[RMDB]
RNA sequence: GGGAACGACUCGAGUAGAGUCGAAAAUUGCUCGUGCGUACGAUCCGUUUUCUUUGAGUCGCGUUGUUUGGGAAUGCAGCGCAAAGUAGGUGGUAAAUUCCAUCUAAAGCUAAAUAUUGGUGCGAGACACAGUAAUAGCGUUCGCGCUAUUACUGUGAAAAGAAACAACAACAACAAC
Reactivity to 2A3 in 0.01 (KOAc 150mM, MgCl2 10mM, bicine 150mM(pH8.5), 24C), signal-to-noise 6, nucleotides 027 to 126: u070u060g020c010u000c020g020u040g020c020g030u080a060c040g040a070u050c030c020g030u030u030u050u010c040u060u090u120g130a070g040u120c040g010c010g020u010u010g020u020u080u100g080g020g020a080a040u040g000c010a010g010c010g000c010a000a020a020g110u050a010g000g010u020g010g000u040a130a210a120u140u010c000c000a010u000c010u010a050a040a030g040c020u080a080a100a060u180a140u120u120g040g000u030g020c020g000a010g020a010
Reactivity to DMS in 0.01 (KOAc 150mM, MgCl2 10mM, bicine 150mM(pH8.5), 24C), signal-to-noise 3, nucleotides 027 to 126: u000u010g010c040u010c020g050u000g010c040g010u020a090c100g000a060u010c060c060g020u010u000u010u010c020u010u020u010g010a090g000u000c090g020c030g010u010u000g010u010u000u000g000g020g000a060a090u000g010c030a030g010c010g010c030a030a040a060g000u000a030g010g010u000g000g000u000a110a060a200u010u000c000c000a000u000c010u010a020a090a100g010c090u000a040a060a090u010a070u010u000g010g020u000g000c020g000a090g000a250
Description: Chemical mapping of a 177-nucleotide RNA with 2A3 and DMS. The reactions ran in a buffer of 150 mM KOAc, 10 mM MgCl2 and 150 mM bicine (pH 8.5), at 24 C. For 2A3 the reverse transcriptase was SuperScript II with manganese.